RNA sequence: GGGAACGACUCGAGUAGAGUCGAAAAGCACAAAACUUCGAACAUUAUAGCAGUUAGUAGUUGCCUAAACCCAUUGCAAUAUAUGGGACAGUAGAGGUCGCAAGCCUAUACUGUGCGGUGAACAUUCAAAAGGGAUGGUACUUCGGUACCAUCCCAAGUAACCAUCUAUGUUCGCAUAGAUGGUUACAAAAGAAACAACAACAACAAC
Reactivity to 2A3 in 0.01 (KOAc 150mM, MgCl2 10mM, bicine 150mM(pH8.5), 24C), signal-to-noise 4, nucleotides 027 to 156: g030c050a010c020a070a080a080a060c060u160u160c100g090a130a040c040a160u180u200a120u190a110g050c060a030g000u030u090a030g000u040a040g020u060u040g000c000c000u090a150a080a090c000c000c010a000u000u010g000c010a020a000u010a000u000a010u160g000g010g020a010c000a000g000u010a000g000a000g010g030u110c030g030c190a080a030g010c010c000u000a000u000a020c000u000g010u030g030c060g050g000u060g060a060a040c020a060u140u280c090a190a040a030a060g010g000g000a000u000g000g010u000a010c000u010u060c160g040g010u000a000c010c000a000u010c000c000c000a000a000
Reactivity to DMS in 0.01 (KOAc 150mM, MgCl2 10mM, bicine 150mM(pH8.5), 24C), signal-to-noise 3, nucleotides 027 to 156: g020c040a110c030a030a110a040a060c030u000u000c030g030a180a140c140a080u000u000a100u000a110g010c100a090g000u010u000a070g030u000a110g010u000u000g000c020c040u000a010a110a180c000c010c000a020u000u000g010c050a180a220u000a100u000a010u000g010g000g010a080c020a020g020u000a020g000a000g080g020u000c080g000c300a110a300g000c010c010u000a070u000a010c000u000g040u000g020c090g000g000u000g000a080a060c080a130u000u000c060a040a050a140a230g010g020g020a020u000g000g020u000a000c000u010u010c260g090g050u000a020c000c000a000u000c000c000c000a010a010
This 207-nucleotide RNA was probed chemically with 2A3 and DMS. 2A3 adducts were read by reverse transcription with SuperScript II with manganese. Conditions: 150 mM KOAc, 10 mM MgCl2 and 150 mM bicine (pH 8.5), 24 C.